Source: RMDB libraries RFM100 and RFMREP, as collected in RNAgym. This 177-nucleotide RNA was probed chemically with DMS and 2A3. As a SHAPE reagent, 2A3 marks flexible, mostly unpaired nucleotides at the ribose 2'-OH. For 2A3 the reverse transcriptase was SuperScript II with manganese. Reactivities are given for positions 27 through 126.
RNA sequence: GGGAACGACUCGAGUAGAGUCGAAAAACACAACCGACCCAGGAGACGCUAGCGUGUGCCCAGGGAAGAGUUCUCUUUUCUUUUUAACAAGCAUAUCCUACCUUGGAAACGGAUUAUCCGGCGAUAAGAGAGCUUGUAUAUUCGUAUACAAGCUCUCAAAAGAAACAACAACAACAAC
Reactivity to DMS in 0.01 (KOAc 150mM, MgCl2 10mM, bicine 150mM(pH8.5), 24C), signal-to-noise 3, nucleotides 027 to 126: a120c080a100c140a060a060c030c010g000a130c040c000c010a110g050g000a120g020a080c100g000c050u000a040g030c060g040u020g010u000g020c030c020c050a070g000g010g010a050a070g000a130g000u000u020c110u000c020u010u000u000u010c020u000u010u010u020u010a050a090c100a060a040g000c090a030u020a100u000c010c010u000a040c110c040u030u000g000g020a040a080a100c080g020g000a180u010u010a090u020c020c020g020g050c060g020a100u030a040a100
Reactivity to 2A3 in 0.01 (KOAc 150mM, MgCl2 10mM, bicine 150mM(pH8.5), 24C), signal-to-noise 6, nucleotides 027 to 126: a000c080a010c030a040a050c020c010g050a060c010c010c000a020g030g010a060g040a010c030g010c090u050a030g040c010g070u060g020u040g060c010c010c030a020g020g000g020a030a030g030a010g050u150u030c080u020c000u080u050u030u030c030u040u090u040u040u150a060a050c050a070a000g020c010a020u030a060u130c010c010u020a110c010c010u020u050g040g000a040a120a030c040g030g000a030u060u040a040u180c010c000g040g000c050g060a050u090a240a020